RNA sequence: GGGAACGACUCGAGUAGAGUCGAAAAGGGUGAUGUCUCCUAACCUUUAUCAAUGGGGGCACUCGGUCGUGCUGAGGGUAGAAAUUUUAUUUCGUGCCUACCUUAGACGCUUGUCGUCGGGAGUAUGUGGGACUGAUGAACUUCGGUUCAUCAGUAAUGCUCAUAUAGAGUUCGCUCUAUAUGAGCAAAAAGAAACAACAACAACAAC
Reactivity to DMS in 0.01 (KOAc 150mM, MgCl2 10mM, bicine 150mM(pH8.5), 24C), signal-to-noise 2, nucleotides 027 to 156: g010g000g000u010g030a080u000g020u000c030u010c010c000u000a110a120c030c040u000u000u000a110u010c150a080a130u020g030g040g030g010g040c020a090c010u000c030g030g000u010c030g030u000g020c010u000g010a120g020g000g040u000a170g000a050a040a080u000u010u000u010a110u010u010u000c030g000u010g010c050c020u000a060c020c000u010u000a100g000a050c010g020c060u000u010g020u000c010g030u000c020g000g010g030a140g020u000a040u000g000u020g000g030g020a080c000u000g000a020u000g000a040a020c010u000u000c300g050g010u000u010c000a000u010c010a010g020u000a030a130
Reactivity to 2A3 in 0.01 (KOAc 150mM, MgCl2 10mM, bicine 150mM(pH8.5), 24C), signal-to-noise 3, nucleotides 027 to 156: g040g000g030u100g000a060u070g010u000c000u010c000c000u050a120a160c010c000u130u160u100a170u190c120a090a100u180g010g000g000g010g000c000a010c020u010c000g020g000u040c020g030u040g050c070u080g040a100g020g030g010u050a020g120a060a170a110u130u290u120u130a150u040u130u150c060g030u100g050c000c010u030a050c020c000u000u090a070g000a000c000g050c060u100u230g080u280c020g020u010c010g000g020g010a040g030u090a100u180g030u130g010g020g030a000c000u000g000a000u010g000a000a000c010u020u040c160g040g000u000u000c000a000u000c000a000g010u000a010a020